Structure probing data (2A3 and DMS) for a 177-nucleotide construct. It was measured as part of the RMDB library OK1LIB. The reactions ran in a buffer of 150 mM KOAc, 10 mM MgCl2 and 150 mM bicine (pH 8.5), at 24 C.
RNA sequence: GGGAACGACUCGAGUAGAGUCGAAAAAUGGGCUCUAGAGCCACACUGCCUAGGCUCAAUCUGUUCUACUGCUCACUCUUCAGUUUCCUCAUUUGGAACAUGGACAUCGUAACAGAGCUUUAUAGAGCGUUUUCAGAACUUUCGAGUUCUGAAAACGAAAAGAAACAACAACAACAAC
Reactivity to 2A3 in 0.01 (KOAc 150mM, MgCl2 10mM, bicine 150mM(pH8.5), 24C), signal-to-noise 6, nucleotides 027 to 126: a000u110g010g010g020c080u080c030u220a040g040a040g060c010c020a120c030a020c040u110g010c000c010u000a030g000g030c020u000c020a040a060u030c050u050g050u060u020c020u040a090c010u070g080c000u010c040a070c010u050c020u060u050c030a040g020u040u040u030c010c000u090c090a220u070u100u170g050g010a020a030c050a100u030g030g000a020c010a120u070c070g010u030a070a050c040a060g040a000g030c000u100u110u020a220u090a060g090a010g040
Reactivity to DMS in 0.01 (KOAc 150mM, MgCl2 10mM, bicine 150mM(pH8.5), 24C), signal-to-noise 2, nucleotides 027 to 126: a120u020g040g000g000c020u040c030u010a020g000a150g000c020c070a060c240a130c160u030g000c010c040u000a010g000g000c020u000c010a040a080u000c020u010g000u000u000c040u000a050c070u020g030c060u010c010a120c100u010c080u000u020c050a040g020u020u010u040c010c040u010c300a080u010u020u000g000g000a010a050c120a010u020g000g020a090c090a060u000c080g000u020a120a050c090a070g000a070g000c020u000u010u000a130u000a070g000a120g000